Record summary: This 177-nucleotide RNA was probed chemically with DMS.
[RMDB]
RNA sequence: GGGAACGACUCGAGUAGAGUCGAAAAGAUAUGGAGAAAUCGAUAAGUCGCAUUCGGAAACGAAUGGCGACUUUUGACGAUUUCUCCUAAGUCAAAAGAGUUGGAGCCGUUCGCGGCUCCAACUCAACAUAUAAACAAAGUUCGCUUUGUUUAUAUGAAAAGAAACAACAACAACAAC
Reactivity to DMS in 0.01 (KOAc 150mM, MgCl2 10mM, bicine 150mM(pH8.5), 24C), signal-to-noise 1, nucleotides 027 to 126: g010a040u000a300u010g000g000a000g010a000a000a000u000c000g000a080u020a040a010g000u000c010g000c000a010u000u010c010g000g000a070a050a100c000g000a010a010u000g010g010c000g010a000c000u020u010u010u010g010a210c080g000a020u000u000u000c000u010c000c000u020a000a070g000u000c010a090a100a150a180g000a020g000u000u000g020g010a020g050c000c000g040u000u010c200g020c010g000g000c000u000c030c000a000a000c000u010c010a010a110

The DMS profile rests on 2,124 reads.